[RMDB]
The record gives the reactivity of an RNA of 207 nucleotides to 2A3 and DMS.
RNA sequence: GGGAACGACUCGAGUAGAGUCGAAAAGGCAGUCUUCGGACUGCCCGUAGGGCGUACUACUACCUCCCUUUGAUCUAGAGAACUACGUUUAUCCCAAAUAGGAUAAACGCUCUAGGGAGGGACGUAGUAUCGCGGUGGUUAGUCUUUCGAGACUAAACUAAUUCCCCUAAUUCGUUAGGGGAAUUAGAAAAGAAACAACAACAACAAC
Reactivity to 2A3 in 0.01 (KOAc 150mM, MgCl2 10mM, bicine 150mM(pH8.5), 24C), signal-to-noise 6, nucleotides 027 to 156: g010g000c010a000g000u000c010u070u190c300g130g010a000c000u000g010c000c000c000g070u140a070g020g190g000c020g000u030a040c010u020a010c000u010a020c010c030u070c030c010c000u110u160u140g130a130u070c040u060a020g010a000g030a090a110c150u150a050c300g000u010u000u000a010u030c040c020c040a140a300a160u250a090g000g000a000u000a000a000a000c010g020c000u020c000u010a010g000g000g000a000g020g010g000a010c030g000u010a010g000u010a030u110c030g000c030g030g070u100g030g060u030u030a010g000u010c000u030u120u190c300g110a030g000a010c010u020a030a030a010
Reactivity to DMS in 0.01 (KOAc 150mM, MgCl2 10mM, bicine 150mM(pH8.5), 24C), signal-to-noise 4, nucleotides 027 to 156: g010g040c000a030g000u000c010u000u010c300g060g020a020c000u000g010c010c000c010g010u000a100g030g030g030c020g020u000a060c070u010a020c000u000a300c010c020u020c000c000c000u000u000u010g000a140u000c060u000a150g010a250g010a110a230c040u010a070c000g020u000u000u000a000u000c000c010c010a030a150a240u000a040g000g000a040u000a000a000a000c000g000c000u000c030u000a020g010g010g010a020g000g010g030a050c170g010u000a010g000u000a010u000c020g040c030g010g030u000g010g010u010u000a020g000u000c000u000u000u000c210g020a090g020a070c010u000a020a070a190
Description:
For DMS the reverse transcriptase was MarathonRT. Conditions: 150 mM KOAc, 10 mM MgCl2 and 150 mM bicine (pH 8.5), 24 C. For 2A3, 3,936 sequencing reads were counted.